The record gives the reactivity of an RNA of 177 nucleotides to 2A3 and DMS. For DMS the reverse transcriptase was MarathonRT. 2A3 adducts were read by reverse transcription with SuperScript II with manganese. The reactions ran in a buffer of 150 mM KOAc, 10 mM MgCl2 and 150 mM bicine (pH 8.5), at 24 C.
RNA sequence: GGGAACGACUCGAGUAGAGUCGAAAAAGAUAGCAUACGUGCUAUCACCUGCAUUGUACACACUGUGCGGAAAACAUGGACAUGCACAGCGCAUACAAUGUGGAUGCACAGUGGCUACGGCCACUGACUCUGAAUGGGGUUUCGACCCCAUUCAGAGAAAAGAAACAACAACAACAAC
Reactivity to 2A3 in 0.01 (KOAc 150mM, MgCl2 10mM, bicine 150mM(pH8.5), 24C), signal-to-noise 7, nucleotides 027 to 126: a010g000a000u000a000g010c020a020u040a080c250g110u040g000c000u000a000u010c000a020c010c000u000g000c000a010u010u000g000u020a010c040a000c010a000c080u000g000u000g000c030g060g050a090a080a100a030c090a170u260g140g070a050c050a070u160g000c000a000c000a010g000c020g000c010a020u010a010c000a000a000u000g000u020g030g040a030u130g050c100a020c000a090g000u000g000g000c000u020a060c210g090g000c000c000a000c000u000g040a050
Reactivity to DMS in 0.01 (KOAc 150mM, MgCl2 10mM, bicine 150mM(pH8.5), 24C), signal-to-noise 4, nucleotides 027 to 126: a090g000a010u010a000g000c000a020u020a060c260g040u000g020c010u000a000u000c000a080c070c010u000g000c000a000u010u000g040u000a010c240a210c150a090c000u000g000u010g000c010g000g010a100a150a060a070c120a160u050g000g040a060c130a220u100g020c000a010c000a000g030c060g000c120a290u000a000c030a010a000u010g000u000g000g020a050u020g000c200a160c030a040g030u000g010g000c020u000a130c200g020g000c010c000a000c000u000g000a090